RNA sequence: GGGAACGACUCGAGUAGAGUCGAAAAGUACGUGUUCCCCAACGAUGGGCUUUCAAUUACAGCGAAGUAGAAGAGUGCCAAUACGGGCCUUCUUCGAGUCUGAAGGUGUAACAGAUGGUCAGAGGGAACUCCAUUACGUCUUCGGACGUAAUGGAGUAAAAGAAACAACAACAACAAC
Reactivity to DMS in 0.01 (KOAc 150mM, MgCl2 10mM, bicine 150mM(pH8.5), 24C), signal-to-noise 2, nucleotides 027 to 126: g000u000a110c100g010u010g010u000u000c020c000c030c060a120a070c130g000a140u000g000g010g000c040u020u000u000c010a100a150u000u000a030c040a050g020c030g000a240a000g000u000a210g010a010a030g010a020g020u010g010c000c000a100a060u000a160c300g040g000g020c010c000u000u010c000u000u000c010g000a230g020u010c030u000g000a090a160g000g000u000g000u010a020a050c160a060g020a000u010g000g030u000c020a080g010a150g010g000g000a110
Reactivity to 2A3 in 0.01 (KOAc 150mM, MgCl2 10mM, bicine 150mM(pH8.5), 24C), signal-to-noise 1, nucleotides 027 to 126: g020u000a050c080g100u090g000u090u060c040c010c000c030a020a050c050g130a170u090g060g030g000c010u050u090u150c030a130a110u050u020a020c000a030g050c010g030a030a000g010u010a050g000a010a000g030a010g000u110g020c080c040a090a070u300a170c280g170g010g010c040c000u120u030c000u000u000c020g030a070g060u040c000u000g080a100a090g090g060u030g010u000a040a040c050a090g020a010u030g040g060u010c030a010g060a040g110g020g000a000